[RMDB]
RNA sequence: GGGAACGACUCGAGUAGAGUCGAAAAGGCGGGGCCGAGGGGCUGAGCCCGCGGGGGGAGGGAACAGCGUUGAUCACGUGACGUGGUUUCAGUGUUUACACCCGCAGCGGGCCGGGGGUUCGGCCUCUGGCAUAAUACUCUUCGGAGUAUUAUGCCAAAAAGAAACAACAACAACAAC
Reactivity to DMS in 0.01 (KOAc 150mM, MgCl2 10mM, bicine 150mM(pH8.5), 24C), signal-to-noise 2, nucleotides 027 to 126: g000g020c080g010g010g000g000c120c060g000a050g030g000g000g020c230u010g000a110g020c010c010c010g010c040g000g050g000g000g040g010a200g000g000g030a080a010c070a050g010c120g000u050u000g030a080u010c020a010c030g000u000g000a100c150g000u000g010g000u000u020u010c000a070g020u000g000u000u000u010a090c070a100c030c010c010g020c100a110g020c040g010g010g000c040c000g000g010g010g010g010u020u000c030g000g000c010c010u000c060
Reactivity to 2A3 in 0.01 (KOAc 150mM, MgCl2 10mM, bicine 150mM(pH8.5), 24C), signal-to-noise 5, nucleotides 027 to 126: g110g060c090g000g010g010g010c050c070g050a060g010g020g030g060c040u060g030a020g030c000c000c000g010c010g010g010g010g000g020g010a190g040g030g020a050a020c020a040g130c030g060u060u060g030a050u060c080a040c090g090u150g150a050c140g010u050g030g030u010u030u040c030a050g020u000g040u090u020u060a060c070a080c010c000c000g030c030a010g010c010g000g000g000c010c000g000g000g000g000g020u040u040c040g000g000c000c000u030c000

The record gives the reactivity of an RNA of 177 nucleotides to DMS and 2A3. The data come from the RNA Mapping Database (RMDB), library RFM100.